[RMDB]
Structure probing data (DMS and 2A3) for a 207-nucleotide construct.
RNA sequence: GGGAACGACUCGAGUAGAGUCGAAAAUCAGUAGAUUCCCAUUGAGGCUUCCAGUGGGUUCAGUCAAUGAAGAAUCUUGGAGGAGAUCUGAGGGGAGGGGGGAAAGAGGAGAAUGACCUCAGAGUAUGUUUUUCAUAGCACCUUCCCUGUAGUGUGAUAGCAUAAAUAGUUUCGACUAUUUAUGCUAAAAAGAAACAACAACAACAAC
Reactivity to DMS in 0.01 (KOAc 150mM, MgCl2 10mM, bicine 150mM(pH8.5), 24C), signal-to-noise 2, nucleotides 027 to 156: u010c050a140g000u030a160g000a230u010u000c000c020c010a220u000u000g000a110g030g020c060u010u000c000c050a100g060u000g000g080g010u000u000c030a160g010u010c080a090a120u010g000a120a170g010a060a060u000c040u000u020g000g030a120g020g000a140g000a100u010c020u020g010a080g040g020g020g030a080g000g000g010g020g030g030a090a050a140g000a110g010g000a090g010a090a180u000g010a100c010c020u000c020a110g020a120g020u000a070u000g020u000u000u000u000u000c000a060u000a060g020c030a050c000c010u000u000c020c010c020u010g000u010a020g060u000g010u000g010a160
Reactivity to 2A3 in 0.01 (KOAc 150mM, MgCl2 10mM, bicine 150mM(pH8.5), 24C), signal-to-noise 1, nucleotides 027 to 156: u120c020a020g180u150a090g030a050u020u050c040c010c000a020u030u050g000a050g010g020c020u070u020c030c030a050g010u140g070g010g000u050u070c030a020g180u060c040a080a170u160g050a040a070g030a010a030u000c000u050u130g080g000a050g040g020a010g010a040u020c090u060g020a020g000g000g000g020a010g000g020g030g000g010g020a020a120a070g010a010g060g010a040g040a030a110u070g060a060c000c010u000c000a000g040a010g140u010a040u040g030u000u070u000u000u120c050a050u140a030g040c050a030c000c000u000u050c000c040c030u020g070u070a010g000u020g140u210g050a060
The DMS profile rests on 3,124 reads.